RNA sequence: GGGAACGACUCGAGUAGAGUCGAAAAUGGCCUGAGAUGUGCCAUCGCACGGCGGGAGGUCGUUCUAUCCUGCGGCACCGUCCAAUCCCCGAAGCUGCUUGAGCUUUCGGGUAUAGGGGACGGUGAGCCUCCCGGCACUAUUCGUAGUGCCGGGAGGAAAAGAAACAACAACAACAAC
Reactivity to 2A3 in 0.01 (KOAc 150mM, MgCl2 10mM, bicine 150mM(pH8.5), 24C), signal-to-noise 5, nucleotides 027 to 126: u040g000g010c030c010u160g090a170g060a190u150g100u190g020c000c000a050u030c060g040c040a040c020g030g020c030g020g070g020a090g010g100u020c000g010u060u010c030u040a160u110c010c030u110g070c040g090g000c000a000c000c000g000u000c000c010a010a030u030c010c000c010c000g000a000a000g000c020u070g050c140u290u300g100a010g010c010u150u190u090c020g000g000g010u010a010u040a010g120g000g000g000a000c010g000g000u000g000a000g000
Reactivity to DMS in 0.01 (KOAc 150mM, MgCl2 10mM, bicine 150mM(pH8.5), 24C), signal-to-noise 2, nucleotides 027 to 126: u010g000g000c010c000u020g000a300g000a160u020g000u010g010c060c140a120u030c090g000c090a100c100g050g000c040g000g010g010a060g000g010u000c010g030u000u000c100u000a220u010c000c040u000g000c070g000g000c000a010c000c000g020u010c000c010a060a140u000c230c000c000c010g020a000a010g000c000u000g010c190u070u030g050a030g000c000u020u030u040c010g000g020g030u000a010u000a180g010g010g040g040a000c010g000g050u000g000a110g010